Overview:
Chemical mapping of a 207-nucleotide RNA with DMS. For DMS, 2,210 sequencing reads were counted.

RNA sequence: GGGAACGACUCGAGUAGAGUCGAAAAUCCUCGCGUUCGCGCGAGGAAAAAAAGAUAUGGAGCUAAUCUCUUCGAUAAGCUAAGGGUCGGAAACGACCCUUAGCUUUUGACGAAGACUAGCUCCUAAGUCAAAAAACGCUAUCUUCGGAUAGCGUAACAUUCAGGAAAUGUUCGCAUUUCCUGAAUGAAAAGAAACAACAACAACAAC
Reactivity to DMS in 0.01 (KOAc 150mM, MgCl2 10mM, bicine 150mM(pH8.5), 24C), signal-to-noise 1, nucleotides 027 to 156: u000c010c000u000c000g030c000g030u000u000c300g050c050g050c000g010a060g050g040a010a000a010a090a070a030a180g010a070u000a220u010g000g000a030g010c000u010a040a010u000c040u000c030u010u000c000g000a220u000a020a020g000c000u000a010a020g030g010g060u000c030g030g000a130a090a190c000g000a020c000c000c000u000u000a000g000c000u000u010u000u000g010a300c060g020a020a020g030a040c000u000a000g020c020u000c000c010u000a000a050g010u030c020a000a050a110a080a100a070c010g020c000u000a000u000c010u000u000c300g030g000a020u030a000g010c010g010u000a000a120